[RMDB]
RNA sequence: GGGAACGACUCGAGUAGAGUCGAAAACGCUGUCGCCGCCGGAUUCCGUGGAGGAUCCUUCGAGUACGCCUACGCAAGGAUCCAGAGGGCAAUCCGCUACGAUUUGUUCCACGGACUCGUGAAACAAAGUAUAUGCCUAUUUCGAUAGGCAUAUACUAAAAGAAACAACAACAACAAC
Reactivity to DMS in 0.01 (KOAc 150mM, MgCl2 10mM, bicine 150mM(pH8.5), 24C), signal-to-noise 9, nucleotides 027 to 126: c100g020c070u000g010u000c050g020c020c020g020c100c040g010g000a050u000u000c010c010g030u000g000g010a110g010g000a010u000c000c010u000u000c050g000a080g010u010a100c220g010c160c060u000a100c040g010c120a030a010g000g000a010u000c010c010a060g010a130g010g000g010c190a090a070u000c010c020g010c050u000a030c050g000a160u000u010u010g010u000u000c000c000a020c010g000g000a060c190u000c020g010u010g000a070a050a060c110a070a080
Reactivity to 2A3 in 0.01 (KOAc 150mM, MgCl2 10mM, bicine 150mM(pH8.5), 24C), signal-to-noise 6, nucleotides 027 to 126: c020g020c060u070g040u060c020g010c060c010g010c020c020g030g010a020u060u000c000c010g030u070g040g060a070g020g000a000u000c000c000u000u010c020g010a010g020u040a050c150g090c030c040u060a100c020g020c090a010a000g010g000a000u000c010c000a020g090a030g060g040g000c040a020a050u040c010c020g000c040u050a040c040g110a140u060u040u220g030u040u010c010c000a010c010g020g050a080c040u050c080g040u050g070a070a040a030c050a030a130
This 177-nucleotide RNA was probed chemically with DMS and 2A3. The RNA was probed in 150 mM KOAc, 10 mM MgCl2 and 150 mM bicine (pH 8.5) at 24 C. For 2A3, 15,113 sequencing reads were counted. For 2A3 the reverse transcriptase was SuperScript II with manganese. High DMS reactivity at an A or C suggests that its Watson-Crick edge is free. The DMS profile rests on 20,912 reads. It was measured as part of the RMDB library OK2TST.